Conditions: 150 mM KOAc, 10 mM MgCl2 and 150 mM bicine (pH 8.5), 24 C. This 177-nucleotide RNA was probed chemically with DMS and 2A3. For DMS, 4,792 sequencing reads were counted.

RNA sequence: GGGAACGACUCGAGUAGAGUCGAAAAGAUUAGGCAGAUAACAACUAUUACGCGUCUUGCCACUCUAUUGUAAAGUAAACAACAAGAUAUAAGUUUAAUACACCUACGCGACAAGAUGAAUCAGCAAUCCUAAAUUACACUUCGGUGUAAUUUAGGAAAAAGAAACAACAACAACAAC
Reactivity to DMS in 0.01 (KOAc 150mM, MgCl2 10mM, bicine 150mM(pH8.5), 24C), signal-to-noise 5, nucleotides 027 to 126: g010a090u000u000a090g020g010c030a040g020a080u010a070a120c120a080a120c100u000a090u000u010a120c130g020c070g020u000c030u000u000g010c010c020a080c120u010c050u000a050u000u010g000u000a050a090a090g000u000a020a020a050c050a060a150c100a090a070g000a090u000a070u000a090a090g000u000u000u000a030a100u000a050c090a060c070c010u000a040c110g020c050g000a050c050a030a030g010a040u000g000a050a070u000c060a050g000c140a070a080
Reactivity to 2A3 in 0.01 (KOAc 150mM, MgCl2 10mM, bicine 150mM(pH8.5), 24C), signal-to-noise 3, nucleotides 027 to 126: g030a000u100u170a080g000g000c020a020g060a120u060a110a070c020a050a010c080u100a080u210u120a050c020g000c000g050u000c050u050u050g000c040c020a040c010u000c020u040a110u090u090g040u110a100a100a110g020u010a070a070a030c030a020a000c020a090a000g060a100u060a000u010a240a000g010u000u020u040a080a030u060a030c020a030c010c010u050a000c040g000c010g030a020c020a020a000g020a100u100g040a030a040u070c010a010g050c000a010a050